[RMDB]
RNA sequence: GGGAACGACUCGAGUAGAGUCGAAAACAGUGGACCGUCUCCGACUGGGGACCGGUGAGGCCUGCACUGAGGGGUGGCUGGGCGUGCGGCUGGUGAGGGGACCCAGAGCUUUGCCUUGAUGUGCCUCAGGAUUUUACCAUUUCGAUGGUAAAAUCCUAAAAGAAACAACAACAACAAC
Reactivity to DMS in 0.01 (KOAc 150mM, MgCl2 10mM, bicine 150mM(pH8.5), 24C), signal-to-noise 2, nucleotides 027 to 126: c040a060g010u020g000g020a070c020c020g000u010c030u000c020c030g020a110c250u010g000g000g000g000a110c070c050g050g020u000g010a160g010g000c020c020u000g020c040a020c010u000g020a160g010g000g010g020u000g000g000c060u020g020g010g020c080g020u010g010c030g020g010c060u000g010g000u000g000a140g010g000g010g010a120c100c000c010a080g000a220g000c060u000u020u000g010c040c010u000u010g000a140u010g010u000g010c020c010u010c100
Reactivity to 2A3 in 0.01 (KOAc 150mM, MgCl2 10mM, bicine 150mM(pH8.5), 24C), signal-to-noise 2, nucleotides 027 to 126: c030a010g050u060g070g040a020c020c000g060u020c030u010c050c030g300a300c270u280g000g000g000g010a050c090c090g000g020u030g000a060g090g040c000c050u110g030c050a010c050u040g010a080g060g050g010g050u030g050g050c090u080g000g050g000c060g030u090g020c000g110g070c060u060g050g050u110g040a090g000g020g030g020a010c040c000c030a010g030a020g000c060u130u120u200g000c010c000u030u040g050a070u080g010u050g030c010c010u020c060

An RNA of 177 nucleotides, treated with DMS and 2A3 and read out base by base. The RNA was probed in 150 mM KOAc, 10 mM MgCl2 and 150 mM bicine (pH 8.5) at 24 C. DMS adducts were read by reverse transcription with MarathonRT. As a SHAPE reagent, 2A3 marks flexible, mostly unpaired nucleotides at the ribose 2'-OH.